The data come from the RNA Mapping Database (RMDB), library OK1LIB. An RNA of 177 nucleotides, treated with DMS and 2A3 and read out base by base. The DMS profile rests on 1,390 reads.

[RMDB]
RNA sequence: GGGAACGACUCGAGUAGAGUCGAAAAACAUCGUCGUUGCAGUCACCGCCCCUGACGCCCUUUUUAGCUCAGCAAGAGAAGGAAUUGGAGGGCCGCGAGGAAAUGCUGACGGCCAUUGCAGCACUGCGAGUGAGUAGCACUUCGGUGCUACUCACUCAAAAGAAACAACAACAACAAC
Reactivity to DMS in 0.01 (KOAc 150mM, MgCl2 10mM, bicine 150mM(pH8.5), 24C), signal-to-noise 1, nucleotides 027 to 126: a030c130a110u020c140g020u000c040g000u010u020g000c000a020g000u010c140a100c080c060g000c000c020c010c050u020g010a040c080g000c000c000c000u000u000u000u000u000a120g000c000u040c050a170g020c030a110a110g000a060g000a000a130g000g000a090a110u000u000g010g000a110g000g000g030c120c050g000c020g000a010g000g030a000a090a080u000g000c040u010g040a040c030g000g010c020c170a180u010u000g040c030a000g020c000a100c060u000g070c170
Reactivity to 2A3 in 0.01 (KOAc 150mM, MgCl2 10mM, bicine 150mM(pH8.5), 24C), signal-to-noise 2, nucleotides 027 to 126: a000c000a000u080c060g030u010c020g040u040u010g000c030a060g010u010c030a000c010c010g020c000c000c000c030u060g040a030c060g000c000c000c000u000u140u040u050u030a020g010c030u040c180a040g020c000a150a020g060a010g080a160a050g130g080a130a100u220u150g090g000a030g050g070g000c020c000g020c010g020a080g010g050a000a150a000u140g000c030u050g020a060c000g010g020c050c000a050u050u080g050c030a040g060c010a010c120u090g010c000
For 2A3 the reverse transcriptase was SuperScript II with manganese. DMS adducts were read by reverse transcription with MarathonRT.